RNA sequence: GGGAACGACUCGAGUAGAGUCGAAAAGCCUUGUUGUUCGCAACAAGGCAAAUGGGACGGGUCGGGAGGGGGAUACUCGCGGUCCCAAGAAGAAUCCACACUAAAGGCCAAGGUUCGCCUUGGCCAAGAUGCAGUUAUUCUUCGGAAUAACUGCAUCAAAAGAAACAACAACAACAAC
Reactivity to DMS in 0.01 (KOAc 150mM, MgCl2 10mM, bicine 150mM(pH8.5), 24C), signal-to-noise 2, nucleotides 027 to 126: g010c000c000u010u000g000u000u000g010u000u010c300g020c000a050a000c000a040a010g030g010c010a010a010a070u000g000g020g000a060c050g000g010g000u000c120g040g000g000a210g000g000g040g020g000a050u000a060c030u000c030g020c040g010g020u000c010c010c020a050a070g000a090a120g020a120a110u020c060c010a100c130a070c070u010a060a170a110g000g030c020c000a010a020g000g010u020u010c250g020c010c000u010u000g000g010c000c000a020a000
Reactivity to 2A3 in 0.01 (KOAc 150mM, MgCl2 10mM, bicine 150mM(pH8.5), 24C), signal-to-noise 2, nucleotides 027 to 126: g000c010c000u000u000g000u010u010g010u020u050c260g000c050a000a010c000a000a000g010g010c000a000a000a020u040g000g000g110a060c090g000g060g160u250c070g030g030g070a270g060g010g000g000g010a010u030a080c000u020c010g070c010g040g040u010c000c010c000a000a010g050a030a010g020a010a050u040c060c010a050c000a000c100u170a070a080a090g000g010c000c000a020a000g050g000u030u090c190g060c030c000u010u010g010g000c020c000a000a000

The record gives the reactivity of an RNA of 177 nucleotides to DMS and 2A3. Values cover nucleotides 27 to 126. The reactions ran in a buffer of 150 mM KOAc, 10 mM MgCl2 and 150 mM bicine (pH 8.5), at 24 C. The DMS profile rests on 1,100 reads. 2A3 adducts were read by reverse transcription with SuperScript II with manganese.